[RMDB]
RNA sequence: GGGAACGACUCGAGUAGAGUCGAAAACUACCGCGCCACAGUGCUUCGAAUCUGCUUUGCCAGCCGCGGGCAGGCGAGGUUAUACCAGCAAGAUCGGUAUGCAGGUCGAGAUGGUCUUCGUCGAGGAGACCUCACCGAUGUUCGCAUCGGUGAGGUCAAAAGAAACAACAACAACAAC
Reactivity to 2A3 in 0.01 (KOAc 150mM, MgCl2 10mM, bicine 150mM(pH8.5), 24C), signal-to-noise 1, nucleotides 027 to 126: c010u010a040c010c050g060c000g110c030c000a080c010a080g080u060g070c000u080u030c020g050a060a050u000c020u050g050c060u140u100u200g000c080c070a040g060c010c000g070c030g000g030g000c020a010g010g000c000g000a030g000g030u120u080a030u070a070c010c020a030g020c030a060a040g000a180u100c010g030g040u130a050u150g010c010a000g040g000u010c030g000a040g000a180u100g000g000u040c050u010u060c020g070u030c090g070a030g020g010a010
Reactivity to DMS in 0.01 (KOAc 150mM, MgCl2 10mM, bicine 150mM(pH8.5), 24C), signal-to-noise 1, nucleotides 027 to 126: c030u000a150c070c050g020c040g020c030c080a050c180a190g050u000g020c050u000u010c020g030a050a050u010c030u000g000c040u000u030u030g040c030c050a090g010c170c110g020c140g000g010g000c010a040g010g020c010g000a020g000g000u000u010a080u000a100c060c020a040g000c120a030a150g000a110u010c030g010g000u000a070u010g010c030a050g010g020u000c050g000a140g000a070u000g010g010u000c010u000u000c000g050u000c070g000a200g000g010a110
An RNA of 177 nucleotides, treated with 2A3 and DMS and read out base by base. The reactions ran in a buffer of 150 mM KOAc, 10 mM MgCl2 and 150 mM bicine (pH 8.5), at 24 C. Values cover nucleotides 27 to 126. The DMS profile rests on 1,068 reads. Source: RMDB library OK2TST, as collected in RNAgym. DMS (dimethyl sulfate) methylates the pairing face of unpaired adenines and cytosines.